[RMDB]
RNA sequence: GGGAACGACUCGAGUAGAGUCGAAAACGGAAGCAUUAAAACCAUUCGAGCUAGUCAAUGCGUGGCGUGUCUGUCCGCAGCGUGUUGGCGAAUGUAAAGAGUGACUAAGCAUGUAGUACCGAGGAUGAUAAGAGCAAUUCGUUCGCGAAUUGCUCAACGUCAAUCGUAAGUUCGCUUACGAUUGACGAAAAGAAACAACAACAACAAC
Reactivity to 2A3 in 0.01 (KOAc 150mM, MgCl2 10mM, bicine 150mM(pH8.5), 24C), signal-to-noise 4, nucleotides 027 to 156: c040g030g040a060a010g030c040a040u050u080a040a050a050a110c030c040a030u030u060c050g010a020g040c030u070a040g020u020c010a010a000u020g010c000g000u020g020g010c020g010u090g060u080c110u150g110u050c020c010g000c010a010g000c010g000u020g000u020u000g000g000c010g010a020a020u060g020u050a050a080a020g060a020g010u040g010a020c050u030a050a010g060c040a030u070g030u070a070g020u060a090c000c050g010a060g080g010a040u080g010a010u100a180a100g010a000g000c000a010a010u000u000c010g040u060u080c180g010c010g080a000a000u000u000g000c000u000c000a000a000
Reactivity to DMS in 0.01 (KOAc 150mM, MgCl2 10mM, bicine 150mM(pH8.5), 24C), signal-to-noise 2, nucleotides 027 to 156: c040g000g000a270a120g020c040a110u000u050a070a080a060a070c070c010a150u000u000c030g010a250g030c040u000a110g000u010c040a030a010u010g000c000g080u000g000g060c030g060u000g040u000c070u010g010u000c100c020g000c000a000g040c030g020u020g000u000u000g040g000c000g000a070a050u000g010u000a040a100a160g020a080g000u010g010a080c030u000a050a070g060c050a060u000g020u000a140g000u000a050c010c010g010a100g030g010a050u020g000a140u000a070a130g000a020g000c000a000a010u000u000c010g040u000u000c250g000c030g020a040a020u000u010g020c000u000c010a000a050